[RMDB]
RNA sequence: GGGAACGACUCGAGUAGAGUCGAAAAUGGUGCGACCUCGGCUCAUGCAACCUGGGUUCAAGCGAUUCUCCUGCCUCAGUCCUCCGAGUAGCUGGGAUUACAGGCACGGGCCACCACACCCAGCUAAACCAAGCACAAGAUUCGUCUUGUGCUUGGUAAAAGAAACAACAACAACAAC
Reactivity to 2A3 in 0.01 (KOAc 150mM, MgCl2 10mM, bicine 150mM(pH8.5), 24C), signal-to-noise 2, nucleotides 027 to 126: u080g030g020u060g000c020g020a140c020c000u010c040g030g040c010u030c050a050u120g010c030a040a050c010c000u030g060g000g060u070u070c070a060a000g060c010g040a020u060u000c040u020c020c000u040g040c000c010u050c020a020g050u040c020c020u000c020c010g040a020g130u030a020g020c010u000g000g000g040a070u080u100a070c060a030g040g030c040a050c100g070g150g050c000c000a030c030c000a050c000a040c040c000c000a010g000c000u010a080a010
Reactivity to DMS in 0.01 (KOAc 150mM, MgCl2 10mM, bicine 150mM(pH8.5), 24C), signal-to-noise 3, nucleotides 027 to 126: u000g010g030u020g010c080g010a060c060c040u000c180g000g020c030u000c040a080u020g020c100a070a110c050c000u000g000g010g000u000u010c060a080a150g030c040g000a080u000u000c030u010c020c020u000g000c050c020u010c090a060g000u000c020c010u000c060c050g020a080g000u010a050g000c020u000g000g020g010a120u010u010a080c150a060g000g010c050a090c180g030g000g000c030c060a150c090c030a100c240a050c010c010c040a030g010c060u000a020a070